Structure probing data (DMS and 2A3) for a 177-nucleotide construct.
It was measured as part of the RMDB library OK2TST.
[RMDB]
RNA sequence: GGGAACGACUCGAGUAGAGUCGAAAAAAAAUCUAUCUCAUCACAGGGUAUAGUCACCGGUGAUGAACUCCUUUUCCAUCAUUUCUUGGUGAGUGAAUCAUUUCAGAACCUGGGGCUAAACGAGAUACUCAUCCAUUACGUUCGCGUAAUGGAUGAGAAAAGAAACAACAACAACAAC
Reactivity to DMS in 0.01 (KOAc 150mM, MgCl2 10mM, bicine 150mM(pH8.5), 24C), signal-to-noise 2, nucleotides 027 to 126: a080a030a010a060u010c070u000a070u010c060u000c010a040u000c040a090c100a060g000g000g000u000a150u000a100g020u000c090a100c010c040g000g000u000g000a070u020g010a050a060c130u000c080c040u000u010u010u000c020c010a060u000c030a050u010u000u030c130u020u000g000g020u000g000a070g010u000g000a020a090u000c100a060u000u020u000c040a060g000a140a090c040c010u020g040g000g000g000c120u010a050a040a040c120g000a060g000a040u000a100
Reactivity to 2A3 in 0.01 (KOAc 150mM, MgCl2 10mM, bicine 150mM(pH8.5), 24C), signal-to-noise 1, nucleotides 027 to 126: a000a040a000a040u050c040u030a030u040c020u000c020a040u040c020a040c020a140g160g000g000u110a140u060a130g120u090c020a010c290c020g010g030u010g000a000u000g010a000a040c040u080c020c000u020u040u090u000c000c000a020u010c020a050u120u120u130c130u100u090g000g020u040g010a060g010u070g040a020a040u060c080a100u070u100u090c030a010g020a020a010c010c070u150g000g000g000g040c040u100a050a050a020c090g000a000g020a030u040a060
DMS adducts were read by reverse transcription with MarathonRT. For DMS, 1,216 sequencing reads were counted.